[RMDB]
RNA sequence: GGGAACGACUCGAGUAGAGUCGAAAAGGGUUCGUCCUUGCGUUUUGUAUGCAGCCUCGUGUAUCGAAAGGGAAUCAGGUUAAUAUUCCUGAACCGAGACGUGGAUAAUAUGUGGUAACACAACCGACUUGAUGGUGUUAUUCGUAACACCAUCAAGAAAAGAAACAACAACAACAAC
Reactivity to 2A3 in 0.01 (KOAc 150mM, MgCl2 10mM, bicine 150mM(pH8.5), 24C), signal-to-noise 8, nucleotides 027 to 126: g060g000g000u060u080c040g030u090c010c010u030u050g020c010g020u020u020u030u080g130u030a070u130g010c030a020g030c000c010u080c060g030u040g020u050a080u070c060g060a160a040a050g060g000g010a050a100u020c020a010g050g010u040u090a130a030u110a130u160u090c000c000u020g010a020a030c010c010g010a010g020a020c030g030u060g010g040a030u050a170a030u100a170u120g060u040g020g020u080a100a010c010a000c010a070a050c020c010g050a040
Reactivity to DMS in 0.01 (KOAc 150mM, MgCl2 10mM, bicine 150mM(pH8.5), 24C), signal-to-noise 8, nucleotides 027 to 126: g010g000g000u020u010c090g010u010c000c010u000u000g000c050g010u000u020u000u020g020u010a050u030g010c060a090g010c030c020u010c030g010u010g010u020a090u000c050g000a050a090a200g000g000g000a070a060u010c100a050g010g010u010u030a110a120u020a170u000u010c000c000u000g000a050a130c120c010g000a040g010a070c030g010u000g000g000a110u010a050a070u020a080u010g020u000g000g000u040a080a100c050a030c060a060a140c080c050g000a180
Record summary: This 177-nucleotide RNA was probed chemically with 2A3 and DMS. The reactions ran in a buffer of 150 mM KOAc, 10 mM MgCl2 and 150 mM bicine (pH 8.5), at 24 C. DMS (dimethyl sulfate) methylates the pairing face of unpaired adenines and cytosines.